Conditions: 150 mM KOAc, 10 mM MgCl2 and 150 mM bicine (pH 8.5), 24 C.
An RNA of 207 nucleotides, treated with 2A3 and DMS and read out base by base.
For DMS the reverse transcriptase was MarathonRT.
For DMS, 2,224 sequencing reads were counted.
For 2A3 the reverse transcriptase was SuperScript II with manganese.
[RMDB]
RNA sequence: GGGAACGACUCGAGUAGAGUCGAAAAUCGUGAUCCUUACGGCUACCCCAUGAAAAGGCAUCAUUGUCUUCACUAUUUUACUAAUGAGCUUACCAGGCUACAAGCACAGAGGUGUUAAGUAACUUGCACAUAGUCACACAGCUAGUCAGUGGAAGAACCUAAUCAUGCUGUUCGCAGCAUGAUUAGGAAAAGAAACAACAACAACAAC
Reactivity to 2A3 in 0.01 (KOAc 150mM, MgCl2 10mM, bicine 150mM(pH8.5), 24C), signal-to-noise 4, nucleotides 027 to 156: u070c020g000u030g030a080u060c010c010u030u070a020c000g040g000c020u100a080c010c000c000c030a090u130g060a070a100a020a020g040g000c020a050u070c040a090u080u160g010u030c040u090u100c040a020c040u100a110u060u160u040u130a030c010u030a040a180u100g020a020g040c010u030u010a110c030c030a030g000g050c000u030a070c070a080a030g020c020a020c010a050g150a050g110g040u040g000u040u050a070a030g020u020a060a090c030u030u060g020c010a010c010a030u040a010g020u010c000a010c010a010c020a090g000c020u070a010g060u070c070a020g020u040g040g050a050a030g050a070a020
Reactivity to DMS in 0.01 (KOAc 150mM, MgCl2 10mM, bicine 150mM(pH8.5), 24C), signal-to-noise 1, nucleotides 027 to 156: u000c050g050u000g010a060u010c030c060u000u020a100c110g010g040c030u010a130c020c040c040c040a130u030g000a080a060a050a040g010g000c040a020u000c060a050u010u010g010u000c020u000u000c020a130c080u000a120u000u020u010u000a160c070u000a070a090u020g010a110g000c020u000u000a090c040c030a170g070g010c000u000a030c080a080a110g000c000a090c030a140g040a130g000g020u000g010u000u040a020a140g040u000a060a030c020u010u000g020c040a070c060a130u000a050g000u000c050a040c080a050c100a070g060c040u000a070g020u000c020a020g020u010g000g000a100a110g000a110a220